[RMDB]
RNA sequence: GGGAACGACUCGAGUAGAGUCGAAAAAAGCCAAGAAUCAUUGUUUCUUGUAGCGGUGGUUUAAACAGAGUUAUAAACAGCAAGUGAAUCUCGUCGCCUUUGUGGGGCUGUGGCCAUGCCCCUCAAACGACUAAUAUUAGUUCGCUAAUAUUAGUCGAAAAGAAACAACAACAACAAC
Reactivity to DMS in 0.01 (KOAc 150mM, MgCl2 10mM, bicine 150mM(pH8.5), 24C), signal-to-noise 9, nucleotides 027 to 126: a080a080g010c030c010a100a090g010a100a060u020c130a130u000u010g010u000u000u000c030u010u010g010u010a080g010c020g010g010u000g010g000u010u000u010a030a070a060c070a100g010a120g010u010u010a100u010a060a090a070c100a060g010c080a080a100g010u000g000a050a050u010c040u010c030g020u000c050g010c040c050u000u000u010g010u000g000g000g010g010c010u010g010u010g000g010c060c060a090u010g000c010c010c000c010u000c020a010a030a100
Reactivity to 2A3 in 0.01 (KOAc 150mM, MgCl2 10mM, bicine 150mM(pH8.5), 24C), signal-to-noise 9, nucleotides 027 to 126: a000a000g110c050c020a060a020g110a040a040u120c050a050u050u040g020u020u020u010c030u030u050g080u090a020g000c020g010g020u040g010g050u020u070u110a050a070a020c050a020g070a020g060u060u060a170u110a160a110a020c060a020g070c050a080a090g030u040g090a060a050u020c030u020c060g080u040c020g040c010c030u040u040u040g020u030g000g010g000g000c020u030g030u100g110g010c030c000a030u060g000c000c000c000c000u010c000a010a030a010
Source information: Source: RMDB libraries RFM100 and RFMREP, as collected in RNAgym. An RNA of 177 nucleotides, treated with DMS and 2A3 and read out base by base. For 2A3 the reverse transcriptase was SuperScript II with manganese. The reactions ran in a buffer of 150 mM KOAc, 10 mM MgCl2 and 150 mM bicine (pH 8.5), at 24 C. DMS adducts were read by reverse transcription with MarathonRT. High DMS reactivity at an A or C suggests that its Watson-Crick edge is free.